Background: The record gives the reactivity of an RNA of 207 nucleotides to 2A3 and DMS. For 2A3, 1,157 sequencing reads were counted. It was measured as part of the RMDB library M2RFPK.

RNA sequence: GGGAACGACUCGAGUAGAGUCGAAAACGCACUCGCAGCUUAAUAACCUGCGCUGAGCCCUUCUCCCCCAGCUUGCCUGUGUCCUAGCGAAUUGGAAGGUCAUCCUUCACAGGAUCGUGUGGAAGUCAUUACUCGUGAGUGUUCGCACUCACGAGAACCAUGAACUAUCCUUCGGGAUAGUUCAUGGAAAAGAAACAACAACAACAAC
Reactivity to 2A3 in 0.01 (KOAc 150mM, MgCl2 10mM, bicine 150mM(pH8.5), 24C), signal-to-noise 2, nucleotides 027 to 156: c020g000c040a050c000u020c000g010c000a000g000c010u040u020a030a000u050a010a090c000c000u030g020c000g000c150u020g010a040g010c060c000c000u150u040c110u030c000c000c030c020c000a000g000c010u020u070g000c060c010u050g040u010g060u080c010c000u010a050g000c000g050a160a150u090u020g050g010a030a000g000g030u120c060a160u190c000c000u070u000c090a080c000a050g060g040a030u010c030g020u030g020u050g050g030a010a010g070u100c030a070u050u180a050c000u010c000g000u030g000a000g010u020g000u060u020c050g000c050a000c000u000c000a000c000g000a000g000a000a000
Reactivity to DMS in 0.01 (KOAc 150mM, MgCl2 10mM, bicine 150mM(pH8.5), 24C), signal-to-noise 1, nucleotides 027 to 156: c120g020c000a080c020u000c030g020c000a000g010c060u000u020a110a150u010a120a120c180c010u010g000c000g020c130u000g000a090g000c000c040c040u000u000c040u000c000c030c040c040c050a090g000c010u000u010g000c020c010u000g000u020g020u000c010c000u000a150g030c040g000a070a090u000u000g000g020a080a080g080g020u000c080a170u000c030c020u000u010c050a050c040a130g020g010a090u000c040g040u010g010u010g010g020a130a220g020u010c050a110u010u000a120c000u000c000g030u010g020a040g020u000g040u000u010c300g000c020a040c010u010c000a020c000g000a000g020a040a110
For 2A3 the reverse transcriptase was SuperScript II with manganese. The RNA was probed in 150 mM KOAc, 10 mM MgCl2 and 150 mM bicine (pH 8.5) at 24 C.